[RMDB]
Structure probing data (2A3) for a 207-nucleotide construct.
RNA sequence: GGGAACGACUCGAGUAGAGUCGAAAAGCGUACUACAUUUCUUGUGGGACUUGGAUUUAUAUGUCUCUAGCGUGUCCCAAAUAGGAUCGGGCAUAUUGUCAGUCCCACGGAAAUGUAUCGCAAAAGAGUCGUGAUUAGUUCGCUAAUCACGACUCAACAACUCGCCUGGCUUCGGCCAGGCGAGUUGAAAAGAAACAACAACAACAAC
Reactivity to 2A3 in 0.01 (KOAc 150mM, MgCl2 10mM, bicine 150mM(pH8.5), 24C), signal-to-noise 1, nucleotides 027 to 156: g050c000g000u080a120c010u000a010c000a000u070u000u030c000u300u300g020u060g000g030g000a050c040u140u250g270g000a050u050u300u060a050u050a000u000g100u030c140u080c120u270a070g140c040g140u220g110u170c000c050c080a240a030a110u300a050g000g000a010u070c050g000g000g000c050a000u010a000u010u010g000u000c000a010g000u000c000c100c000a000c000g010g000a000a000a000u030g000u000a000u100c000g000c000a120a120a000a000g000a000g000u000c010g000u000g000a000u040u000a000g030u060u050c260g010c080u000a000a000u000c000a000c000g000a000c000u000c000a000a000
It was measured as part of the RMDB library RNAMAK. Values cover nucleotides 27 to 156. Conditions: 150 mM KOAc, 10 mM MgCl2 and 150 mM bicine (pH 8.5), 24 C. For 2A3, 469 sequencing reads were counted.